[RMDB]
RNA sequence: GGGAACGACUCGAGUAGAGUCGAAAAGCAUCGGCUAAUGUCCACGUGCAGCCGGCCCCAUAUGCUAAGAAUGCCAAUACAACAAACGCAAUGGUAACACCAACACUCGCACCAUUAACUUUAUGCAUACACAAGAACACGGACCCGAUGAUACCACGUCAACAGAGAGAUUCGUCUCUCUGUUGACAAAAGAAACAACAACAACAAC
Reactivity to 2A3 in 0.01 (KOAc 150mM, MgCl2 10mM, bicine 150mM(pH8.5), 24C), signal-to-noise 7, nucleotides 027 to 156: g020c000a040u060c020g030g000c060u130a170a070u170g030u030c010c040a050c110g040u090g000c020a020g030c020c050g040g010c020c010c000c010a030u090a040u130g020c030u050a040a030g060a140a070u100g050c040c030a050a020u110a130c070a110a020c040a050a130a040c090g030c080a010a060u060g000g010u070a060a020c040a020c050c020a070a030c010a020c080u080c040g010c010a030c020c020a060u080u070a080a040c040u070u090u090a080u210g030c030a030u080a100c030a010c020a060a070g050a150a020c040a010c090g030g000a010c010c010c020g020a040u050g010a010u090a090c020c110a050c050
Reactivity to DMS in 0.01 (KOAc 150mM, MgCl2 10mM, bicine 150mM(pH8.5), 24C), signal-to-noise 2, nucleotides 027 to 156: g040c100a020u020c030g020g020c010u020a150a060u010g030u000c020c020a170c100g050u000g030c010a100g060c030c030g010g000c030c040c020c010a120u010a060u050g000c040u020a100a100g040a070a080u000g030c070c050a080a130u000a090c080a110a150c070a050a070a130c100g020c080a070a030u000g000g000u000a120a060c050a150c040c070a060a170c090a090c070u010c040g040c020a040c030c000a000u010u000a060a130c070u000u010u010a080u030g020c020a050u000a060c110a100c060a040a120g000a020a160c020a060c050g000g000a040c010c010c020g030a040u000g030a170u000a140c040c080a040c280
About this RNA:
The data come from the RNA Mapping Database (RMDB), library OK3TST. This 207-nucleotide RNA was probed chemically with 2A3 and DMS. The RNA was probed in 150 mM KOAc, 10 mM MgCl2 and 150 mM bicine (pH 8.5) at 24 C. For 2A3 the reverse transcriptase was SuperScript II with manganese.